The record gives the reactivity of an RNA of 177 nucleotides to DMS and 2A3.
For 2A3, 1,380 sequencing reads were counted.
The reactions ran in a buffer of 150 mM KOAc, 10 mM MgCl2 and 150 mM bicine (pH 8.5), at 24 C.
2A3 adducts were read by reverse transcription with SuperScript II with manganese.
For DMS, 1,137 sequencing reads were counted.
RNA sequence: GGGAACGACUCGAGUAGAGUCGAAAAGGCCUUUGCGGUCGGAAUCUCCUUGUGGGACAACGUCAUUUUUUCGGCCAUCCGCGCGUGCACGCCGUGGACCGGCCGCACGUCCGGCCCGGCUCCGACGGGAUAUCACCCGGUUCGCCGGGUGAUAUCCAAAAGAAACAACAACAACAAC
Reactivity to DMS in 0.01 (KOAc 150mM, MgCl2 10mM, bicine 150mM(pH8.5), 24C), signal-to-noise 2, nucleotides 027 to 126: g000g000c020c010u000u010u010g020c080g020g020u000c010g010g000a150a150u010c090u000c030c030u000u000g040u000g020g000g000a030c090a090a160c110g020u000c090a130u000u000u000u000u020u000c090g000g000c000c060a110u000c000c000g010c160g010c090g000u000g030c090a110c130g000c000c020g010u010g000g010a060c040c050g000g010c020c030g000c070a000c180g020u000c210c040g010g030c050c030c000g000g020c030u000c020c040g000a110c140g000
Reactivity to 2A3 in 0.01 (KOAc 150mM, MgCl2 10mM, bicine 150mM(pH8.5), 24C), signal-to-noise 1, nucleotides 027 to 126: g000g000c000c000u100u170u300g090c120g030g000u010c040g000g040a040a010u000c000u020c020c050u140u250g110u300g030g030g000a030c010a170a010c120g070u030c080a080u040u040u010u070u210u130c020g030g000c000c010a000u020c010c000g000c010g000c010g000u090g120c110a040c120g070c050c030g000u040g000g050a070c050c010g000g030c000c000g040c000a010c020g030u010c010c030g070g010c010c010c030g030g000c020u000c040c020g050a050c060g030